Chemical mapping of a 177-nucleotide RNA with 2A3 and DMS. The reactions ran in a buffer of 150 mM KOAc, 10 mM MgCl2 and 150 mM bicine (pH 8.5), at 24 C. For 2A3, 10,504 sequencing reads were counted. DMS adducts were read by reverse transcription with MarathonRT.

[RMDB]
RNA sequence: GGGAACGACUCGAGUAGAGUCGAAAAGAUAUGGACCUUGUCUAGCAAUGAUGUCGGAAACGAUUGAGCUAAGACACUGGGUCCUAAGUCAAAGUACUAACGAAGACUUCGGUCUUCGUUAGUACAACAAUACUCCUCGGUUCGCCGAGGAGUAUUGAAAAGAAACAACAACAACAAC
Reactivity to 2A3 in 0.01 (KOAc 150mM, MgCl2 10mM, bicine 150mM(pH8.5), 24C), signal-to-noise 3, nucleotides 027 to 126: g050a010u080a070u150g000g000a000c000c010u040u040g010u000c000u000a000g000c010a100a300u230g060a040u130g080u020c000g000g070a060a070a060c010g020a010u020u080g020a010g000c000u050a150a060g020a010c010a020c100u090g050g000g000u000c000c010u020a160a020g020u040c060a110a080a090g000u000a000c000u010a000a000c000g010a010a000g000a000c000u060u140c300g030g000u000c000u000u010c000g000u000u000a000g000u000a000c000a000a010
Reactivity to DMS in 0.01 (KOAc 150mM, MgCl2 10mM, bicine 150mM(pH8.5), 24C), signal-to-noise 6, nucleotides 027 to 126: g000a070u000a300u010g010g010a010c000c000u010u000g010u000c010u000a030g010c010a160a120u010g010a120u000g000u010c010g010g000a170a090a170c000g000a010u000u000g000a110g010c010u010a040a090g000a000c000a020c300u000g010g010g000u000c000c000u000a020a100g010u000c070a140a130a100g010u000a000c010u000a010a010c000g010a010a010g010a020c000u000u010c230g020g000u000c010u000u000c000g010u000u000a000g000u000a000c010a060a100